[RMDB]
RNA sequence: GGGAACGACUCGAGUAGAGUCGAAAAGAUAUGGACGGGUCAACAGCUAGUCUGUCGGAAACGACAGCUAGACAUGACCAGUCCUAAGUCAAACUUUAUGCCCUCAGUUCGCUGAGGGCAUAAAGAAGGUAACAGAGAUGUUCGCAUCUCUGUUACCAAAAGAAACAACAACAACAAC
Reactivity to 2A3 in 0.01 (KOAc 150mM, MgCl2 10mM, bicine 150mM(pH8.5), 24C), signal-to-noise 1, nucleotides 027 to 126: g010a010u050a000u080g000g010a010c040g020g000g010u010c010a040a040c020a220g060c010u010a000g100u300c020u000g010u000c000g020g030a030a030a030c010g010a000c000a000g010c000u000a000g030a140c040a050u030g010a000c000c000a010g010u040c000c000u020a020a010g040u030c090a050a050a080c010u000u020u000a010u000g010c000c000c000u030c010a060g020u070u160c300g030c220u000g000a020g000g030g000c000a010u010a000a000a000g000a010a000
Reactivity to DMS in 0.01 (KOAc 150mM, MgCl2 10mM, bicine 150mM(pH8.5), 24C), signal-to-noise 2, nucleotides 027 to 126: g000a060u000a230u010g000g000a000c000g000g020g010u010c010a030a100c300a150g010c000u000a000g000u030c000u010g010u000c000g020g000a030a050a160c000g020a010c000a010g000c010u000a000g010a110c090a220u000g010a000c000c000a040g030u010c000c000u010a000a050g000u000c010a160a080a240c010u000u000u000a000u000g010c000c000c000u000c000a000g000u010u020c220g000c010u000g020a000g000g000g000c000a000u000a000a000a000g000a100a090
An RNA of 177 nucleotides, treated with 2A3 and DMS and read out base by base. The RNA was probed in 150 mM KOAc, 10 mM MgCl2 and 150 mM bicine (pH 8.5) at 24 C. For DMS the reverse transcriptase was MarathonRT. Values are in units of 0.01, from 0 to 300, in steps of 10. It was measured as part of the RMDB library TTRDEL. For DMS, 2,237 sequencing reads were counted.